Annotation:
An RNA of 207 nucleotides, treated with 2A3 and DMS and read out base by base.
RNA sequence: GGGAACGACUCGAGUAGAGUCGAAAAGUACGUAGAGUGUCGGCAAGCUCUAUAUAUGGACACUUACGAAGGGUUUUGGUUGUUUUGUAACUCAAGCCGACUUUGAGUAUUUGAGGAAAAUACGACAUGAAUCCUGUGACGUUCGCGUCACAGGAAACAUACAGGCCUCGUUCGCGAGGCCUGUAUGAAAAGAAACAACAACAACAAC
Reactivity to 2A3 in 0.01 (KOAc 150mM, MgCl2 10mM, bicine 150mM(pH8.5), 24C), signal-to-noise 1, nucleotides 027 to 156: g080u030a000c040g000u030a020g000a020g100u020g010u020c030g000g000c030a100a170g020c050u040c060u030a060u010a010u010a000u130g150g030a040c080a040c170u160u150a060c170g090a130a060g050g010g000u040u000u060u100g040g010u000u010g000u000u000u050u070g080u020a000a020c000u000c060a050a030g030c030c000g000a010c090u080u020u110g090a010g020u010a020u020u090u050g050a090g020g050a010a020a020a010u030a060c040g030a010c030a060u120g060a070a040u000c000c000u000g000u000g010a000c000g040u040u100c200g010c000g080u000c000a020c000a000g000g000a000a000a000
Reactivity to DMS in 0.01 (KOAc 150mM, MgCl2 10mM, bicine 150mM(pH8.5), 24C), signal-to-noise 1, nucleotides 027 to 156: g000u000a020c030g020u010a020g000a060g050u010g000u000c030g030g020c070a160a300g010c020u020c030u000a030u010a030u000a030u000g010g000a080c090a030c050u010u000a200c100g030a090a090g010g010g000u000u000u000u000g030g000u000u000g000u010u000u020u000g000u000a070a050c050u000c040a040a140g030c030c010g040a090c070u000u000u020g000a300g010u000a040u010u000u000g020a150g000g010a120a040a050a050u000a050c000g000a170c060a060u010g020a110a090u000c020c000u000g030u000g030a010c010g000u010u000c270g020c030g080u000c000a040c030a000g000g020a000a000a010
The RNA was probed in 150 mM KOAc, 10 mM MgCl2 and 150 mM bicine (pH 8.5) at 24 C. For DMS the reverse transcriptase was MarathonRT. The 2A3 profile rests on 564 reads. 2A3 adducts were read by reverse transcription with SuperScript II with manganese.